[RMDB]
RNA sequence: GGGAACGACUCGAGUAGAGUCGAAAAGGUCCGAGUGAAGGGGGACUCCGGGACGCCUUGCAUGUUGGGGACGAAGCCGCCCCCGGGCGCUCCCCUCGAUCCACCUUCGAGGGGGUUCACACCCCCAUAACGUGAUACUUCGGUAUCACGAAAAGAAACAACAACAACAAC
Reactivity to 2A3 in 0.01 (KOAc 150mM, MgCl2 10mM, bicine 150mM(pH8.5), 24C), signal-to-noise 9, nucleotides 027 to 129: g110g030u050c010c020g010a050g090u250g020a020a010g010g000g000g000g010a010c030u010c050c010g010g010g000a000c010g010c010c010u100u180g080c150a200u250g090u190u150g070g000g000g000a020c050g140a140a040g070c130c070g020c010c020c000c000c000g000g000g000c020g000c110u040c000c000c000c000u020c020g010a020u000c010c020a020c010c000u010u010c000g000a040g010g000g000g000g000u170u170c050a040c000a020c040c000c010c000c000a010u060a030a020
Reactivity to DMS in 0.01 (KOAc 150mM, MgCl2 10mM, bicine 150mM(pH8.5), 24C), signal-to-noise 9, nucleotides 027 to 129: g050g020u040c010c030g010a120g010u080g030a020a030g030g020g010g030g010a040c020u020c080c300g000g030g030a040c040g020c000c000u000u070g070c230a110u030g030u040u030g000g000g000g000a070c050g050a100a090g010c190c060g000c050c000c000c000c050g010g000g010c020g010c180u020c000c010c010c040u010c180g000a300u010c030c030a030c030c030u000u010c000g020a090g000g020g000g010g010u010u010c180a120c170a190c030c010c010c010c000a010u000a020a100